[RMDB]
An RNA of 177 nucleotides, treated with DMS and 2A3 and read out base by base.
RNA sequence: GGGAACGACUCGAGUAGAGUCGAAAAGAAAAACUGUUCAUGAAGACACCGGGGUAUCUUAACGACUCUCCUUCGGAACUUAGAGAGACCGCCGGGACUUGUGAAAUAUGGAGUCCGGAGUCUCCGACUAUCAUGGAAAGUUCGCUUUCCAUGAUAGAAAAGAAACAACAACAACAAC
Reactivity to DMS in 0.01 (KOAc 150mM, MgCl2 10mM, bicine 150mM(pH8.5), 24C), signal-to-noise 2, nucleotides 027 to 126: g010a020a070a090a130a140c080u000g010u000u010c030a090u020g010a080a100g030a110c160a110c110c110g000g020g010g000u010a060u010c050u040u020a020a180c050g010a040c000u010c010u000c070c010u020u010c030g010g000a050a070c060u010u000a130g010a150g050a010g010a030c020c090g030c030c000g020g000g000a020c010u000u000g020u000g000a110a110a130u010a110u020g000g020a030g020u000c000c030g010g030a270g000u000c000u000c000c020g000a260
Reactivity to 2A3 in 0.01 (KOAc 150mM, MgCl2 10mM, bicine 150mM(pH8.5), 24C), signal-to-noise 2, nucleotides 027 to 126: g010a020a080a000a000a020c010u040g040u020u020c080a110u170g050a060a040g060a060c030a030c210c090g020g010g000g070u070a050u050c040u080u030a100a020c040g020a000c010u000c000u010c040c000u130u070c000g000g000a050a010c030u080u150a060g010a010g000a020g000a170c010c140g080c010c050g300g010g050a040c010u050u010g080u010g120a060a100a110u280a130u190g080g000a000g000u000c000c000g020g010a000g030u000c000u000c000c000g050a050
For 2A3 the reverse transcriptase was SuperScript II with manganese. Values cover nucleotides 27 to 126.